[RMDB]
RNA sequence: GGGAACGACUCGAGUAGAGUCGAAAAGAUAUUAACGCGCGUGCUGUGUCUAACGCGAAAUACCCAGUUAUUUUCGACUUUACUCGAGUCGUUAUAGCGUGAUAUGACACAGUUAUCCGCGAACGAACAAACUAGUCACGUUCGCGUGACUAGUUUGAAAAGAAACAACAACAACAAC
Reactivity to DMS in 0.01 (KOAc 150mM, MgCl2 10mM, bicine 150mM(pH8.5), 24C), signal-to-noise 1, nucleotides 027 to 126: g000a110u010a040u000u000a040a120c010g000c000g050c050g010u010g000c010u000g000u000g000u000c000u000a080a000c020g030c010g010a040a040a070u010a050c070c100c230a110g000u000u000a060u000u000u000u000c010g010a010c000u000u010u000a010c010u000c010g030a010g000u000c010g010u000u000a010u000a100g000c020g000u010g000a020u000a010u000g020a000c040a050c050a040g010u000u000a030u000c050c000g000c000g000a050a110c110g010a070a150